The record gives the reactivity of an RNA of 207 nucleotides to 2A3 and DMS. For DMS the reverse transcriptase was MarathonRT. Reactivities are given for positions 27 through 156. It was measured as part of the RMDB library OK3TST. For 2A3 the reverse transcriptase was SuperScript II with manganese. The reactions ran in a buffer of 150 mM KOAc, 10 mM MgCl2 and 150 mM bicine (pH 8.5), at 24 C. Values are in units of 0.01, from 0 to 300, in steps of 10.
RNA sequence: GGGAACGACUCGAGUAGAGUCGAAAAAUGUGACAGGUAUAUUAUUAGGCACUUAGGAGACAUCUAUGAACAAAACAGGGAUUCAUGCACUUGUGAAGCUUGGUUUCUAACUAAGCAAUAAACCCUAAACCAUGAGUGCAGGGAGGAGAGAUGAAUAUAGUCAUCGUAAUUUCGAUUACGAUGACUAAAAAGAAACAACAACAACAAC
Reactivity to 2A3 in 0.01 (KOAc 150mM, MgCl2 10mM, bicine 150mM(pH8.5), 24C), signal-to-noise 1, nucleotides 027 to 156: a010u100g010u030g040a020c010a010g000g090u120a140u020a020u150u120a060u080u160a050g010g010c020a010c030u030u040a030g000g030a020g040a010c010a020u010c050u070a100u150g070a090a020c030a070a050a030a040c060a030g060g000g000a030u050u060c040a040u060g000c040a000c020u010u000g000u000g010a090a010g010c010u010u000g010g040u050u070u050c010u010a010a050c000u000a010a000g010c000a020a020u180a150a090a080c020c000c000u060a090a060a020c070c000a010u040g010a000g010u010g060c010a020g020g060g000a040g000g030a050g010a000g020a060u160g050a070a000u240a020
Reactivity to DMS in 0.01 (KOAc 150mM, MgCl2 10mM, bicine 150mM(pH8.5), 24C), signal-to-noise 2, nucleotides 027 to 156: a120u000g020u000g000a070c040a070g000g010u000a090u010a120u000u000a120u000u000a120g010g000c040a040c050u000u000a070g040g020a210g000a050c020a040u000c030u020a110u010g000a060a140c110a060a030a050a120c020a120g010g000g010a160u000u000c030a160u010g020c020a030c030u000u000g040u040g050a110a150g020c000u000u000g000g000u000u000u000c130u010a020a040c000u010a010a000g020c000a100a070u000a040a030a090c020c040c050u000a100a060a090c080c040a020u000g000a060g030u000g000c010a070g000g030g000a070g010g030a040g000a090g000a070u000g010a070a110u000a180